[RMDB]
RNA sequence: GGGAACGACUCGAGUAGAGUCGAAAAGUCUGCUAGCAGAAUAUGGGAAGAUUUUGAGCUGUGCAGUUCAUUAGGCAUUUAGUGCAUGCCUCCAUGUGUGGGGUGUUGGUGACAUGGAGUAUGGGGCAGGUGCAUCUCGGUUCGCCGAGAUGCACCUAAAAGAAACAACAACAACAAC
Reactivity to 2A3 in 0.01 (KOAc 150mM, MgCl2 10mM, bicine 150mM(pH8.5), 24C), signal-to-noise 2, nucleotides 027 to 126: g020u000c020u010g000c010u020a000g010c010a050g050a160a020u090a100u180g050g020g060a020a000g050a080u050u160u080u110g100a080g010c010u010g010u090g010c000a020g000u060u030c010a010u080u120a080g010g010c040a010u040u040u090a130g040u090g030c030a000u000g060c000c010u030c000c030a070u010g060u000g030u090g000g040g000g080u060g020u060u150g000g070u020g010a010c000a030u000g000g010a010g030u030a120u070g000g000g040g000c080